[RMDB]
RNA sequence: GGGAACGACUCGAGUAGAGUCGAAAAGUCGCUUCAGUCGAGGCACUGCUCGCCGCCAAUGUGGAUUGCCACGUGGCAGACGGGCGGGGCCAGACGGCAUGCCACGUGGCAGCUGAAGCCGGAGCUAGCUCCGGACGGCAUUCGUGCCGUCCGGAGCAAAAGAAACAACAACAACAAC
Reactivity to DMS in 0.01 (KOAc 150mM, MgCl2 10mM, bicine 150mM(pH8.5), 24C), signal-to-noise 1, nucleotides 027 to 126: g010u010c020g010c040u010u000c010a070g050u000c080g000a220g000g040c030a200c070u000g000c000u000c090g010c060c000g000c010c080a120a110u000g040u010g000g000a170u000u030g010c020c010a050c000g030u000g010g020c020a020g000a170c130g020g000g030c070g010g000g030g000c010c010a130g020a130c150g020g000c040a180u010g020c020c010a100c150g010u000g000g020c000a010g030c040u000g010a110a150g010c030c060g070g000a100g010c080u020a070